Structure probing data (DMS and 2A3) for a 170-nucleotide construct. The data come from the RNA Mapping Database (RMDB), library 15KLIB. Reactivities are rounded to 0.1 and cut off at 0 and 3. Conditions: 150 mM KOAc, 10 mM MgCl2 and 150 mM bicine (pH 8.5), 24 C. 2A3 adducts were read by reverse transcription with SuperScript II with manganese.
[RMDB]
RNA sequence: GGGAACGACUCGAGUAGAGUCGAAAAACGAAAGGGCCGCGAGCCUAUCGAGUUUGGAGUCAUCCGGGCCGAAGGGUUGAGACGCACCCACAGACGGGAGCCUCCAGGAGGGUUUGAGGAGAACUCACAGGGCGAAAGUUCGCUUUCGCCAAAAGAAACAACAACAACAAC
Reactivity to DMS in 0.01 (KOAc 150mM, MgCl2 10mM, bicine 150mM(pH8.5), 24C), signal-to-noise 3, nucleotides 027 to 129: a100c100g030a060a100a070g000g000g000c050c050g010c130g030a190g070c030c020u030a090u020c050g030a110g010u000u000u000g000g000a120g010u060c070a000u010c000c000g060g060g010c050c070g000a070a110g010g020g060u000u000g030a050g030a070c120g040c020a070c010c020c030a000c010a080g000a140c090g000g000g000a080g000c110c040u100c010c090a080g060g000a030g030g020g030u000u070u000g000a000g000g030a060g020a140a040c050u050c060a060c240a000g000
Reactivity to 2A3 in 0.01 (KOAc 150mM, MgCl2 10mM, bicine 150mM(pH8.5), 24C), signal-to-noise 5, nucleotides 027 to 129: a000c040g010a070a040a010g010g000g000c030c030g130c100g030a050g000c010c000u100a240u030c010g010a020g040u020u060u090g100g010a010g020u060c020a030u000c030c020g000g020g030c000c040g050a090a080g010g000g010u030u040g010a030g000a020c030g020c040a030c000c010c000a050c030a040g100a010c070g040g000g000a010g030c010c010u050c000c010a030g000g020a020g000g060g000u050u090u090g060a050g010g000a040g020a010a010c000u030c030a080c080a080g060